Chemical mapping of a 207-nucleotide RNA with 2A3. Values cover nucleotides 27 to 156.
[RMDB]
RNA sequence: GGGAACGACUCGAGUAGAGUCGAAAACUGCCAGCAUUCUCCAACAAUGACCAAUGGGUUUGUAUUUUUAAGUAUCAUUGUGAAUUCAUGGAUUUAAACAUAUUUUAUGAAUUUCAAUCCAUUGCAGAUAGUAUCCAUUUUGAUACUUAAAUUGCCCGUGGCUAAAGAGUUUCGACUCUUUAGCCACAAAAGAAACAACAACAACAAC
Reactivity to 2A3 in 0.01 (KOAc 150mM, MgCl2 10mM, bicine 150mM(pH8.5), 24C), signal-to-noise 2, nucleotides 027 to 156: c040u080g040c040c030a010g020c010a080u060u020c080u060c050c010a060a030c030a080a160u120g050a130c070c030a050a070u100g010g050g000u090u150u120g040u060a120u030u160u000u010u010a000a000g000u000a000u000c010a010u010u050g010u010g090a070a040u090u060c010a010u020g000g000a000u000u020u040a010a030a000c010a010u080a170u130u190u160u160a090u110g030a130a150u050u000u010c010a000a000u000c000c020a000u000u130g020c050a050g070a130u120a110g120u070a080u080c020c000a010u010u030u000u030g000a000u000a000c000u000u010a010a030a040u020u020g020c000c010c020